[RMDB]
RNA sequence: GGGAACGACUCGAGUAGAGUCGAAAAAGCACAGACUAUGCAGCAAUUGAAGAUAAGAAACGUCGCAUUUAUGGUGUGCAAUUCCAUCCAGAAGUACGUCAUACAGAAUAUGGUAAUGAUUUAUUAAAGCAUGAGUGAGAUUCGUCUCACUCAUGCUAAAAGAAACAACAACAACAAC
Reactivity to 2A3 in 0.01 (KOAc 150mM, MgCl2 10mM, bicine 150mM(pH8.5), 24C), signal-to-noise 3, nucleotides 027 to 126: a000g030c000a000c010a000g170a090c000u020a050u100g070c030a040g030c060a150a200u150u300g140a240a120g050a220u140a120a080g070a070a150a010c030g040u050c060g000c010a020u000u020u210a300u090g100g000u060g000u010g030c040a000a010u150u020c020c030a040u080c050c030a050g000a240a000g050u050a010c040g070u030c040a000u040a050c000a010g100a090a140u230a140u220g090g000u030a140a170u020g110a050u000u090u110a070u050u150a150a080
Reactivity to DMS in 0.01 (KOAc 150mM, MgCl2 10mM, bicine 150mM(pH8.5), 24C), signal-to-noise 2, nucleotides 027 to 126: a030g000c000a000c000a010g000a190c070u000a080u010g020c030a100g000c010a100a200u030u010g090a090a220g040a110u020a120a060g030a090a000a250c240g010u020c080g060c000a000u040u000u000a050u000g000g010u010g000u000g000c010a050a210u000u000c020c000a010u020c040c050a110g040a070a140g000u000a030c150g050u020c070a000u010a040c030a030g020a040a150u000a130u060g000g000u030a070a130u000g000a000u000u000u080a060u000u010a000a160